[RMDB]
RNA sequence: GGGAACGACUCGAGUAGAGUCGAAAACGACGUAAAUCCCGCUCUCUUUAAGGUAAGUGAGCAUGCUUUUCUUAUUUAACGCAUUCAUAAUAAGAACCUUCGACUAGAUUAGAGAUGCAAGGAUGCACUCUAUUUCUAAGUUCGCUUAGAAAUAGAGAAAAGAAACAACAACAACAAC
Reactivity to DMS in 0.01 (KOAc 150mM, MgCl2 10mM, bicine 150mM(pH8.5), 24C), signal-to-noise 9, nucleotides 027 to 126: c100g020a170c180g010u010a080a110a110u000c000c000c030g000c030u000c010u000c000u000u000u000a100a120g010g010u010a030a040g010u000g010a050g010c060a110u000g000c070u000u000u000u000c020u000u000a030u000u000u000a090a100c170g010c080a050u000u010c060a090u000a030a020u000a040a030g000a050a060c230c080u000u000c050g010a080c110u000a080g000a110u000u000a040g000a050g010a050u010g020c040a070a100g010g010a050u010g010c080a230
Reactivity to 2A3 in 0.01 (KOAc 150mM, MgCl2 10mM, bicine 150mM(pH8.5), 24C), signal-to-noise 9, nucleotides 027 to 126: c020g190a020c070g080u110a030a030a150u020c010c000c000g000c010u010c000u000c000u020u090u060a160a040g130g020u060a050a020g060u020g050a020g020c040a050u090g040c020u070u110u080u020c020u030u060a140u100u110u070a080a020c050g000c040a030u030u070c010a020u050a180a020u040a050a030g020a040a030c010c030u050u060c040g090a110c080u070a040g030a200u120u040a050g010a010g010a070u120g020c020a050a050g050g010a020u030g000c010a020

Structure probing data (DMS and 2A3) for a 177-nucleotide construct. Values cover nucleotides 27 to 126.